[RMDB]
RNA sequence: GGGAACGACUCGAGUAGAGUCGAAAACAGUGACUCAUGCCUGUAAUCCCAGCACUUUGGGAGUCUGAGCCAGGCAGAUCACCUGAGGUCACGAGUUCGAGACCAGCCUGGCCAACGUGGUGAAACCCGUAUAUCCCCGAUUCGUCGGGGAUAUACGAAAAGAAACAACAACAACAAC
Reactivity to DMS in 0.01 (KOAc 150mM, MgCl2 10mM, bicine 150mM(pH8.5), 24C), signal-to-noise 6, nucleotides 027 to 126: c060a090g020u000g010a050c060u000c070a090u010g010c040c010u000g000u000a090a100u000c000c010c010a080g010c200a080c170u000u010u010g000g000g000a090g000u010c050u010g010a150g010c130c000a020g010g020c010a040g010a060u000c050a040c050c060u000g010a060g010g000u000c020a070c070g000a110g000u000u000c030g010a080g010a070c020c030a090g010c010c000u000g000g000c020c070a020a060c120g010u000g000g000u010g010a060a090a150c100c060
Reactivity to 2A3 in 0.01 (KOAc 150mM, MgCl2 10mM, bicine 150mM(pH8.5), 24C), signal-to-noise 5, nucleotides 027 to 126: c020a020g030u030g090a050c010u020c050a060u150g090c010c030u060g040u090a070a080u030c000c010c010a030g030c070a080c180u260u210u070g000g000g010a030g000u030c030u010g000a010g020c010c000a000g000g000c020a020g030a080u080c020a030c040c040u060g050a020g010g040u020c030a020c100g020a050g100u170u220c090g020a050g030a080c010c000a000g040c000c010u020g020g010c000c000a070a040c040g050u070g000g040u050g050a070a060a030c030c030